This 177-nucleotide RNA was probed chemically with DMS and 2A3. 2A3 adducts were read by reverse transcription with SuperScript II with manganese.

RNA sequence: GGGAACGACUCGAGUAGAGUCGAAAAACAUCAGUGAGGUACAUCCUUACCUGUUACCUUAGCAAUAAGGUUACAGAUCAUGAUGAUUGGAUUCUAUGAAUACGUGAUUAUAUACCGUAUUUGUUUAGGCCUAGUGAUAGUUCGCUAUCACUAGGCCAAAAGAAACAACAACAACAAC
Reactivity to DMS in 0.01 (KOAc 150mM, MgCl2 10mM, bicine 150mM(pH8.5), 24C), signal-to-noise 1, nucleotides 027 to 126: a050c000a010u000c020a100g010u000g010a000g010g010u020a050c300a140u000c010c000u010u000a060c110c000u000g000u000u000a000c000c000u000u000a040g000c210a040a110u000a020a000g000g000u010u000a000c000a000g000a300u010c300a160u010g030a000u000g000a200u000u000g030g020a250u000u000c000u000a000u000g010a000a000u000a010c000g030u070g000a060u030u030a110u010a110u010a120c100c000g020u000a000u000u000u000g020u000u050u010a060
Reactivity to 2A3 in 0.01 (KOAc 150mM, MgCl2 10mM, bicine 150mM(pH8.5), 24C), signal-to-noise 3, nucleotides 027 to 126: a000c000a010u020c000a000g040u000g020a000g070g010u150a140c040a150u200c020c000u020u000a030c040c000u000g000u000u030a000c000c000u010u010a010g010c060a080a150u000a020a000g000g020u000u050a000c000a010g000a010u100c070a150u140g010a000u020g020a050u000u080g080g050a060u100u000c040u060a070u130g010a000a000u010a010c000g080u110g120a130u200u170a160u030a030u050a200c010c010g000u000a010u000u010u020g090u040u080u120a020